[RMDB]
RNA sequence: GGGAACGACUCGAGUAGAGUCGAAAAGCGGUGAUGAAUUGGGACGCAGGCGCGGAGCCCAGGGACCACUCCCCCUGCACAGACAUGAGACCAUAGGGGACCUGUCUGGGUGGCCUCAGGGAUAGGCCUGCGCUUUUUAUUUCGAUAAAAAGCGCAGAAAAGAAACAACAACAACAAC
Reactivity to 2A3 in 0.01 (KOAc 150mM, MgCl2 10mM, bicine 150mM(pH8.5), 24C), signal-to-noise 1, nucleotides 027 to 126: g010c020g040g070u080g030a120u070g030a040a190u140u080g000g020g030a000c030g000c000a000g070g050c060g020c010g080g030a020g000c000c010c000a020g000g000g010a060c030c000a040c010u030c000c010c000c000c010u030g020c030a030c020a000g040a020c000a050u270g010a060g010a170c100c030a050u250a130g020g000g020g030a020c020c000u020g000u000c030u010g010g000g000u070g040g020c000c000u060c070a090g000g000g080a040u060a060g020g040c000
Reactivity to DMS in 0.01 (KOAc 150mM, MgCl2 10mM, bicine 150mM(pH8.5), 24C), signal-to-noise 2, nucleotides 027 to 126: g010c030g000g040u010g000a060u030g010a110a060u030u010g000g000g020a140c050g000c050a090g000g000c030g020c060g000g000a150g010c020c010c020a070g000g010g010a130c050c020a110c020u030c030c000c010c000c010u030g000c040a160c050a010g010a020c040a030u050g000a130g000a290c010c010a120u030a170g030g000g010g000a190c020c050u000g000u000c010u030g000g000g030u000g030g030c050c000u000c070a090g000g000g000a080u000a060g010g000c090
The record gives the reactivity of an RNA of 177 nucleotides to 2A3 and DMS. Values cover nucleotides 27 to 126. For DMS, 3,557 sequencing reads were counted. For 2A3 the reverse transcriptase was SuperScript II with manganese. DMS adducts were read by reverse transcription with MarathonRT.